The record gives the reactivity of an RNA of 177 nucleotides to DMS and 2A3. Conditions: 150 mM KOAc, 10 mM MgCl2 and 150 mM bicine (pH 8.5), 24 C. For DMS, 4,714 sequencing reads were counted.
RNA sequence: GGGAACGACUCGAGUAGAGUCGAAAAUGGAAUGACUGGAUUGUGGCUCCCCCGGGGUAUCACGCCUUUUACUGCCACGGAGAAUGCCCUUUUCCUCUGGCUGAUCAUCUGAACUCCACUAAUCAUGGGCAAAUUACAAAUUCGUUUGUAAUUUGCCAAAAGAAACAACAACAACAAC
Reactivity to DMS in 0.01 (KOAc 150mM, MgCl2 10mM, bicine 150mM(pH8.5), 24C), signal-to-noise 3, nucleotides 027 to 126: u020g000g020a130a060u020g000a110c050u020g010g000a120u010u010g040u000g000g000c050u000c050c000c010c050c050g010g040g030g000u010a070u000c070a050c100g010c020c030u000u030u000u020a150c120u000g010c040c020a020c150g010g000a140g000a080a060u020g000c010c050c000u000u000u000u020c000c000u000c070u000g020g000c000u000g010a020u020c050a100u010c020u000g000a050a100c070u000c010c010a100c160u010a030a050u020c070a080u030g020
Reactivity to 2A3 in 0.01 (KOAc 150mM, MgCl2 10mM, bicine 150mM(pH8.5), 24C), signal-to-noise 7, nucleotides 027 to 126: u130g030g030a070a060u090g050a080c030u050g020g040a070u090u130g040u050g030g030c010u050c010c030c010c000c000g010g000g010g010u090a060u200c050a020c110g050c020c000u050u090u040u110a090c080u080g030c000c000a040c030g010g020a050g050a080a060u140g010c000c000c000u040u050u040u030c020c000u020c020u010g030g000c000u020g020a070u090c020a020u010c020u020g010a040a030c020u020c030c020a040c050u110a100a070u150c090a150u160g010